[RMDB]
RNA sequence: GGGAACGACUCGAGUAGAGUCGAAAACUCUGCAUAUUCGUAUGCAGAGAAAUUACGGUCGGCUCAUGCAGCUAGUCGAACAUGCUGCUCGACCUUUUGGUAAAAACCGGAGGUUCGCCUCCGGUAAGAAGCGCAAUAAGUUCGCUUAUUGCGCUUCAAAAGAAACAACAACAACAAC
Reactivity to DMS in 0.01 (KOAc 150mM, MgCl2 10mM, bicine 150mM(pH8.5), 24C), signal-to-noise 2, nucleotides 027 to 126: c000u000c000u010g000c000a000u000a010u000u000c190g020u000a000u000g020c000a000g010a000g000a020a060a050u000u000a060c180g010g010u000c000g010g010c020u000c060a010u000g000c020a300g010c040u020a150g020u010c170g000a080a300c070a040u000g010c070u000g020c000u000c020g000a050c000c000u000u000u000u020g020g040u020a120a070a080a070a000c000c000g020g000a000g020g020u010u000c200g000c010c000u000c000c000g010g030u000a000a020
Structure probing data (DMS) for a 177-nucleotide construct. The reactions ran in a buffer of 150 mM KOAc, 10 mM MgCl2 and 150 mM bicine (pH 8.5), at 24 C. The data come from the RNA Mapping Database (RMDB), library M2PK50. In probing experiments dimethyl sulfate is read out at A N1 and C N3, which are open when not base-paired.